Background:
This 177-nucleotide RNA was probed chemically with 2A3 and DMS. DMS (dimethyl sulfate) methylates the pairing face of unpaired adenines and cytosines. For DMS the reverse transcriptase was MarathonRT. It was measured as part of the RMDB library OK2TST. The RNA was probed in 150 mM KOAc, 10 mM MgCl2 and 150 mM bicine (pH 8.5) at 24 C.
RNA sequence: GGGAACGACUCGAGUAGAGUCGAAAAUCAUGCUCAUACACGGCCAAAAUCAGCCCUUGAACUUAGUCAUCUGUACCAAUCUAACCAAUAUACCACUCUGUUCAAUACUUGGUUUAUUAUACGACACGUGUGUCGGACUAUUCGUAGUCCGACACACAAAAGAAACAACAACAACAAC
Reactivity to 2A3 in 0.01 (KOAc 150mM, MgCl2 10mM, bicine 150mM(pH8.5), 24C), signal-to-noise 1, nucleotides 027 to 126: u020c010a040u090g050c030u030c030a100u060a080c020a010c100g010g000c000c000a100a030a000a150u040c060a040g050c040c010c000u010u060g020a030a030c000u000u010a000g010u020c030a030u050c020u020g030u040a040c000c040a030a040u040c010u080a060a030c020c000a080a000u030a020u070a120c000c030a020c040u070c020u050g070u040u060c030a040a040u030a040c040u040u050g000g040u020u010u000a050u060u000a100u020a100c100g060a020c040a000c050
Reactivity to DMS in 0.01 (KOAc 150mM, MgCl2 10mM, bicine 150mM(pH8.5), 24C), signal-to-noise 1, nucleotides 027 to 126: u050c110a110u000g010c000u010c050a000u000a080c120a130c190g020g000c000c090a050a040a140a040u000c020a090g010c050c030c040u010u000g000a040a100c060u000u000a050g010u000c000a050u010c070u010g030u000a010c030c000a080a070u010c130u000a070a150c040c030a090a030u030a050u000a060c030c010a000c100u000c080u010g000u000u000c050a070a040u000a050c090u010u000g000g010u000u000u050a090u030u000a140u020a030c150g000a080c090a110c200